[RMDB]
RNA sequence: GGGAACGACUCGAGUAGAGUCGAAAAGCGGCCCAUAGGUACGUGGUACCGCGUACGGCCGUACACAUAGCGCUGAUCGAUCAUACAGCUAGCGCUAGACGCGGCCGCGCUGGAUCGGCCACUAGGCCCUUGCCUCUAGGUUCGCCUAGAGGCAAGGAAAAGAAACAACAACAACAAC
Reactivity to DMS in 0.01 (KOAc 150mM, MgCl2 10mM, bicine 150mM(pH8.5), 24C), signal-to-noise 6, nucleotides 027 to 126: g010c130g000g020c160c000c090a120u010a090g010g010u000a040c090g010u010g040g020u000a060c000c010g010c060g010u000a070c070g030g020c010c010g030u000a060c160a090c140a210u000a020g000c060g020c000u000g010a080u010c110g020a120u010c260a130u010a230c110a090g010c120u010a010g010c010g020c000u000a000g010a170c170g020c000g010g010c000c010g020c000g010c010u020g020g010a100u000c160g010g000c000c000a040c040u000a120g000g020c060
Reactivity to 2A3 in 0.01 (KOAc 150mM, MgCl2 10mM, bicine 150mM(pH8.5), 24C), signal-to-noise 5, nucleotides 027 to 126: g060c060g070g110c020c020c020a050u130a060g110g010u090a040c060g040u030g060g030u070a050c000c040g000c010g020u050a060c020g010g000c010c000g010u050a040c080a010c000a130u030a000g000c020g000c010u050g080a130u160c100g040a080u120c090a120u200a300c040a060g050c070u080a010g000c020g000c000u000a010g010a020c080g000c010g000g000c000c020g000c000g000c030u130g030g040a090u130c090g090g000c040c010a010c020u040a040g180g070c000